Chemical mapping of a 177-nucleotide RNA with 2A3 and DMS. In probing experiments dimethyl sulfate is read out at A N1 and C N3, which are open when not base-paired. The reactions ran in a buffer of 150 mM KOAc, 10 mM MgCl2 and 150 mM bicine (pH 8.5), at 24 C. The data come from the RNA Mapping Database (RMDB), library TTRDEL.

[RMDB]
RNA sequence: GGGAACGACUCGAGUAGAGUCGAAAAGAUAUGGACACAAGCAACAGCUACCGUGUCGGAAACGACACGUAGACAUGCUUGAGUCCUAAGUCAAACCUUCGUAGAUACUUCGGUAUCUACGAAGGAACCUUUUCAUUCACUUCGGUGAAUGAAAAGGAAAAGAAACAACAACAACAAC
Reactivity to 2A3 in 0.01 (KOAc 150mM, MgCl2 10mM, bicine 150mM(pH8.5), 24C), signal-to-noise 2, nucleotides 027 to 126: g020a010u040a020u100g000g000a000c010a000c000a040a010g010c010a010a140c040a290g070c020u020a010c030c250g010u000g000u010c000g000g010a050a050a000c020g000a000c000a000c000g000u000a010g070a190c080a050u030g000c000u020u010g020a020g010u000c000c000u000a030a020g000u000c020a080a030a240c010c000u020u000c010g010u020a010g000a010u010a000c000u030u050c300g100g000u000a000u000c010u010a000c000g000a000a000g010g000a000a000
Reactivity to DMS in 0.01 (KOAc 150mM, MgCl2 10mM, bicine 150mM(pH8.5), 24C), signal-to-noise 2, nucleotides 027 to 126: g000a020u000a270u010g020g000a020c000a160c000a000a000g000c000a050a100c250a240g040c000u000a010c080c120g040u000g000u000c000g000g000a050a040a120c000g000a000c010a000c000g000u000a010g000a160c040a110u010g010c010u000u000g000a020g020u000c000c000u000a010a060g000u010c030a090a120a170c000c000u000u000c000g020u000a000g010a000u000a030c000u000u010c200g030g010u010a010u000c000u000a010c000g000a000a000g000g010a010a050